This 177-nucleotide RNA was probed chemically with DMS. DMS adducts were read by reverse transcription with MarathonRT. The DMS profile rests on 1,292 reads. The RNA was probed in 150 mM KOAc, 10 mM MgCl2 and 150 mM bicine (pH 8.5) at 24 C.

RNA sequence: GGGAACGACUCGAGUAGAGUCGAAAAGUUUUUGACUGGUGGUGUCCAGGUAGAUGUGGGUGUUCUACCUUAUCAAAUUGGAAAUCAUCCUGCAAGGAUCUAAAUGAGGUUAAUCCACAGAGCCAUGACAUGCCAGAACAUUCGUGUUCUGGCAUGUAAAAGAAACAACAACAACAAC
Reactivity to DMS in 0.01 (KOAc 150mM, MgCl2 10mM, bicine 150mM(pH8.5), 24C), signal-to-noise 2, nucleotides 027 to 126: g000u000u000u000u000u050g010a090c030u000g000g010u010g000g040u000g020u010c020c060a030g000g000u000a060g010a140u020g010u010g000g010g010u000g040u000u000c180u010a040c010c000u000u000a100u000c110a040a090a170u000u010g000g000a030a090a060u000c100a050u010c020c040u000g000c120a060a100g000g010a060u000c030u000a030a080a060u010g000a090g020g000u020u000a060a070u010c000c030a040c000a070g060a160g000c000c040a030u010g000

It was measured as part of the RMDB library OK2TRN.